The data come from the RNA Mapping Database (RMDB), library M2PK50. The record gives the reactivity of an RNA of 177 nucleotides to DMS. The DMS profile rests on 854 reads. In probing experiments dimethyl sulfate is read out at A N1 and C N3, which are open when not base-paired. Conditions: 150 mM KOAc, 10 mM MgCl2 and 150 mM bicine (pH 8.5), 24 C. DMS adducts were read by reverse transcription with MarathonRT.
RNA sequence: GGGAACGACUCGAGUAGAGUCGAAAACAAAUACCGUUCGCGGUAUUUGAAAUACGGAAACCUUCGUGCCGUCAGAAGUUAAGUGGUGCUUGCUCUCGUUAAAAAUCAGCUGAUUCGUCAGCUGAAACAGGAGCAGAAGGUUCGCCUUCUGCUCCUGAAAAGAAACAACAACAACAAC
Reactivity to DMS in 0.01 (KOAc 150mM, MgCl2 10mM, bicine 150mM(pH8.5), 24C), signal-to-noise 1, nucleotides 027 to 126: c000a000a010a010u000a010c010c000g020u010u010c160g000c020g010g030u010a020u000u000u000g010a120a060a130u020a070c070g000g000a130a080a100c030c030u030u000c040g010u010g010c020c020g020u010c100a070g010a070a040g000u010u000a020a080g040u000g000g030u010g000c070u000u000g000c060u010c010u000c020g000u000u020a040a030a030a110a120u000c000a000g010c010u030g010a070u000u030c180g000u000c000a000g020c030u010g000a040a040a110